This 177-nucleotide RNA was probed chemically with DMS and 2A3. The 2A3 profile rests on 1,036 reads. The RNA was probed in 150 mM KOAc, 10 mM MgCl2 and 150 mM bicine (pH 8.5) at 24 C. The data come from the RNA Mapping Database (RMDB), library OK2TST.
RNA sequence: GGGAACGACUCGAGUAGAGUCGAAAAACCCAGCCACACUGCUGCCGGAUCUGGACUUAGAAGCGCCCUUACACGACUGUGCCGAGGUCCUGGCUCAAGUUCAUGGGACCCGCUCUAAUCUGAGGGAUGUGAGAAUACGGUUCGCCGUAUUCUCACAAAAAGAAACAACAACAACAAC
Reactivity to DMS in 0.01 (KOAc 150mM, MgCl2 10mM, bicine 150mM(pH8.5), 24C), signal-to-noise 2, nucleotides 027 to 126: a080c020c020c020a140g020c100c080a030c080a090c050u010g020c050u000g000c050c030g000g000a070u000c050u010g030g010a120c090u020u000a100g020a100a070g000c050g010c010c030c030u010u010a080c130a080c090g020a070c100u010g010u010g000c070c020g010a090g000g010u000c030c030u010g020g000c070u000c090a070a070g010u010u000c070a090u000g000g000g000a130c030c020c050g000c040u000c040u010a050a070u020c050u000g010a070g000g030g000a160
Reactivity to 2A3 in 0.01 (KOAc 150mM, MgCl2 10mM, bicine 150mM(pH8.5), 24C), signal-to-noise 1, nucleotides 027 to 126: a000c000c000c030a020g060c000c000a030c010a000c040u030g020c010u000g000c010c000g040g020a020u000c050u110g050g040a060c020u090u090a060g020a170a010g110c010g000c050c000c010u010u110a080c060a010c090g140a080c080u070g050u040g110c070c040g010a080g040g030u050c000c020u020g070g000c020u060c100a030a070g050u110u030c020a050u080g030g020g000a010c020c010c000g040c000u000c000u110a120a160u030c010u020g030a040g000g030g040a020